[RMDB]
RNA sequence: GGGAACGACUCGAGUAGAGUCGAAAAAGGGGAAGUCUGGGAAACAAAAGACAUGGAUAUCGAUGAGAUGUACUCAGAUUUAUAUUCAGAUUUCAACCUUGGGAACAGAAAAGGCUAUUCCAAGGACAUCCCUAUCCCUGUUCGCAGGGAUAGGGAUAAAAGAAACAACAACAACAAC
Reactivity to 2A3 in 0.01 (KOAc 150mM, MgCl2 10mM, bicine 150mM(pH8.5), 24C), signal-to-noise 1, nucleotides 027 to 126: a000g030g000g050g000a030a010g000u000c010u030g020g000g120a160a030a000c040a030a160a040a010g030a010c030a030u010g060g040a050u000a020u170c090g050a000u070g030a000g000a030u070g060u090a070c000u000c040a040g020a080u020u130u090a090u050a050u110u030c030a020g080a070u000u090u120c030a060a030c000c000u010u030g040g000g020a030a120c100a060g170a100a140a050a000g200g060c060u040a080u050u070c030c020a000a000g010g010a030c000
Reactivity to DMS in 0.01 (KOAc 150mM, MgCl2 10mM, bicine 150mM(pH8.5), 24C), signal-to-noise 2, nucleotides 027 to 126: a060g010g000g010g000a030a040g020u000c000u000g010g000g000a220a060a090c130a050a140a120a080g010a140c110a080u010g000g010a160u010a050u010c110g030a160u000g000a140g000a190u010g000u000a160c010u000c100a010g010a170u000u000u000a040u000a050u010u000c050a090g000a130u000u000u040c060a140a100c000c010u000u030g000g000g010a010a070c110a100g000a070a100a050a130g010g030c050u000a040u000u000c000c020a000a020g000g000a120c280